[RMDB]
The record gives the reactivity of an RNA of 177 nucleotides to 2A3 and DMS. The data come from the RNA Mapping Database (RMDB), library OK2TRN. The reactions ran in a buffer of 150 mM KOAc, 10 mM MgCl2 and 150 mM bicine (pH 8.5), at 24 C. DMS adducts were read by reverse transcription with MarathonRT. Reactivities are given for positions 27 through 126.
RNA sequence: GGGAACGACUCGAGUAGAGUCGAAAAGAGAUCUCCAAUGGGUUAGGAAAUUUCCAGUAUCAUGAUUCUUCUGGAGUGCCUACUCAGAAGUGGUGUGAGAAUUUGUAUUUUACCAGCACUAAUCAGAGUCCGACUAUUAUUUCGAUAAUAGUCGGACAAAAGAAACAACAACAACAAC
Reactivity to 2A3 in 0.01 (KOAc 150mM, MgCl2 10mM, bicine 150mM(pH8.5), 24C), signal-to-noise 1, nucleotides 027 to 126: g040a080g040a120u040c060u010c000c040a010a180u070g070g000g010u130u210a010g000g050a130a300a200u230u220u000c000c010a000g000u100a070u100c140a170u300g250a170u190u060c010u010u000c000u070g010g010a020g010u020g040c000c000u000a010c010u020c010a010g080a100a020g080u020g070g160u070g040u040g020a060g070a110a120u020u170u300g180u040a050u050u070u130u070a060c010c010a020g120c010a010c040u020a200a000u170c050a050g020a010
Reactivity to DMS in 0.01 (KOAc 150mM, MgCl2 10mM, bicine 150mM(pH8.5), 24C), signal-to-noise 2, nucleotides 027 to 126: g010a170g000a110u000c030u020c010c050a130a140u000g000g000g000u000u010a000g030g000a060a080a100u010u020u010c030c020a060g030u010a080u000c080a070u000g030a170u010u000c070u010u000c010u000g020g000a030g020u000g000c000c000u000a040c010u000c010a030g000a100a020g010u000g020g020u010g010u020g000a060g000a030a040u010u000u010g020u010a050u000u000u000u000a080c080c020a070g020c030a030c040u000a120a100u020c040a110g030a300